The record gives the reactivity of an RNA of 207 nucleotides to 2A3. Values cover nucleotides 27 to 156. Source: RMDB library ARCHII, as collected in RNAgym. As a SHAPE reagent, 2A3 marks flexible, mostly unpaired nucleotides at the ribose 2'-OH. Reactivities are rounded to 0.1 and cut off at 0 and 3. 2A3 adducts were read by reverse transcription with SuperScript II with manganese. Conditions: 150 mM KOAc, 10 mM MgCl2 and 150 mM bicine (pH 8.5), 24 C.

RNA sequence: GGGAACGACUCGAGUAGAGUCGAAAAAACACUGCCGUUUGAAGUCUGUUUAGAAGAAACUUAAUCAAACUAGCAUCAUGUUGGUUGUUUAUCACUUUUCAUGAUGCGAAACCUAUCGAUAAACUACACACGUAGAAAGAUGUGUAUCAGGACCUUUCAAUACGGUUCACUUCGGUGAACCGUAUUGAAAAGAAACAACAACAACAAC
Reactivity to 2A3 in 0.01 (KOAc 150mM, MgCl2 10mM, bicine 150mM(pH8.5), 24C), signal-to-noise 1, nucleotides 027 to 156: a000a000c020a010c020u050g020c000c040g020u010u010u020g020a080a030g010u010c080u060g070u110u070u160a130g080a210a050g040a040a150a030c050u160u120a070a020u060c000a010a010a010c010u010a000g000c000a010u000c000a000u000g050u080u020g000g040u010u010g000u030u040u000a020u000c000a020c060u160u140u010u010c000a000u000g010a000u000g000c000g000a000a000a000c010c020u130a120u100c050g000a000u000a010a000a000c000u000a000c000a000c020a000c010g080u190a080g260a210a070a040g150a090u000g000u000g000u020a040u150c150a040g050g020a030c000c050u020u010u000